[RMDB]
RNA sequence: GGGAACGACUCGAGUAGAGUCGAAAAAAAAAGAGCCUGAAACCAAGCAGUGAAAACUUUAUAGGGCACUAAAGGAAUGAUCUCGAAAGAGGGACCGGUGUUCUAUAGUCCGUGUUGAAGAACGGGCCUAUUGCUUUCGAUUCGUCGAAAGCAAUAGAAAAGAAACAACAACAACAAC
Reactivity to 2A3 in 0.01 (KOAc 150mM, MgCl2 10mM, bicine 150mM(pH8.5), 24C), signal-to-noise 4, nucleotides 027 to 126: a000a000a000a010a000g080a010g040c000c000u010g010a040a020a020c040c010a060a010g040c010a020g000u050g130a110a050a000a030c010u000u050u000a020u010a000g000g000g010c000a000c010u160a230a150a060g050g010a060a200u040g010a020u010c000u000c010g030a080a070a060g000a020g000g000g010a000c000c000g010g000u000g000u000u010c000u000a010u010a020g000u000c000c000g000u020g080u070u160g110a120a080g020a050a000c000g000g000g000c000
Reactivity to DMS in 0.01 (KOAc 150mM, MgCl2 10mM, bicine 150mM(pH8.5), 24C), signal-to-noise 3, nucleotides 027 to 126: a030a030a050a020a050g000a140g000c020c010u000g000a060a050a080c070c050a070a080g000c050a060g010u000g010a110a060a060a100c070u010u000u000a020u010a010g000g000g010c000a010c010u000a050a100a080g010g000a300a120u030g000a050u030c000u010c000g000a070a080a150g000a030g010g000g020a000c010c010g000g000u000g020u000u020c000u000a020u000a020g010u010c020c020g010u000g000u010u020g020a120a090g020a060a010c010g020g000g000c000
This 177-nucleotide RNA was probed chemically with 2A3 and DMS. For 2A3, 3,074 sequencing reads were counted. The RNA was probed in 150 mM KOAc, 10 mM MgCl2 and 150 mM bicine (pH 8.5) at 24 C.